[RMDB]
This 177-nucleotide RNA was probed chemically with 2A3 and DMS. For DMS the reverse transcriptase was MarathonRT. For 2A3, 2,985 sequencing reads were counted. 2A3 adducts were read by reverse transcription with SuperScript II with manganese. The RNA was probed in 150 mM KOAc, 10 mM MgCl2 and 150 mM bicine (pH 8.5) at 24 C.
RNA sequence: GGGAACGACUCGAGUAGAGUCGAAAAAUCAGCCUUUUCCCAGUGUUUUCCGAGUUAGGUUGAGCUUAAACAAAUCUUUCAGUUACAGUUCUGGGACACCCUCAAUGUUUAAAACGCUAGGAUGUUCUACUAAUGAGAUCUUCGGAUCUCAUUAGUAAAAAGAAACAACAACAACAAC
Reactivity to 2A3 in 0.01 (KOAc 150mM, MgCl2 10mM, bicine 150mM(pH8.5), 24C), signal-to-noise 2, nucleotides 027 to 126: a000u010c000a000g030c010c000u040u090u030u000c000c010c000a040g050u070g040u060u090u050u020c060c010g060a060g030u070u070a020g060g000u010u030g020a010g000c030u050u120a070a040a060c090a070a120a160u070c040u040u150u080c080a070g010u050u050a110c030a070g000u130u000c030u040g000g020g030a030c000a010c010c010c000u050c060a060a110u040g030u020u140u160a130a200a000a000c030g000c050u050a030g020g030a050u030g010u020u030c010
Reactivity to DMS in 0.01 (KOAc 150mM, MgCl2 10mM, bicine 150mM(pH8.5), 24C), signal-to-noise 6, nucleotides 027 to 126: a100u000c030a040g010c000c020u000u010u000u000c000c000c000a190g000u010g010u010u000u010u000c060c040g010a090g020u000u010a060g000g010u000u000g000a070g020c120u000u000a050a070a090c120a050a070a080u000c040u000u000u000c050a050g010u000u000a080c140a100g010u000u000c030u000g010g010g010a040c050a040c030c010c020u010c120a050a090u000g010u000u000u020a070a070a080a080c090g020c060u010a040g000g010a050u000g000u000u000c050